The record gives the reactivity of an RNA of 207 nucleotides to 2A3. The RNA was probed in 150 mM KOAc, 10 mM MgCl2 and 150 mM bicine (pH 8.5) at 24 C. Source: RMDB library RSTRND, as collected in RNAgym. The 2A3 profile rests on 785 reads.
[RMDB]
RNA sequence: GGGAACGACUCGAGUAGAGUCGAAAAUGGUUUCGACGGGGGUAGCAUUGGCAGUAGUAGCCAGGCGAGAUCCCACCGGCUCGUUAAACGGUGGAACGGCUAUUAAGUGCCGACGAUAAUUUAGCUCUGGCUGCUUAAUUAAAAAGUAGCCCAUCCGCCCAUCACUUAUCUUCGGAUAAGUGAUGGGAAAAGAAACAACAACAACAAC
Reactivity to 2A3 in 0.01 (KOAc 150mM, MgCl2 10mM, bicine 150mM(pH8.5), 24C), signal-to-noise 2, nucleotides 027 to 156: u070g060g000u000u010u000c000g050a040c000g010g000g020g010g000u060a000g100c100a100u020u080g090g050c070a030g060u050a000g000u030a000g000c000c000a000g010g000c000g020a000g020a030u020c010c010c000a000c000c000g030g000c040u050c190g070u130u230a120a200a000c000g000g000u000g000g030a110a090c020g000g000c020u020a090u270u100a300a070g100u120g060c010c000g000a040c010g010a040u030a130a050u190u040u070a080g000c030u000c010u300g000g000c020u000g000c010u040u010a020a000u010u110a010a020a000a040a080g010u030a020g000c000c060c000a060u050c040c010g000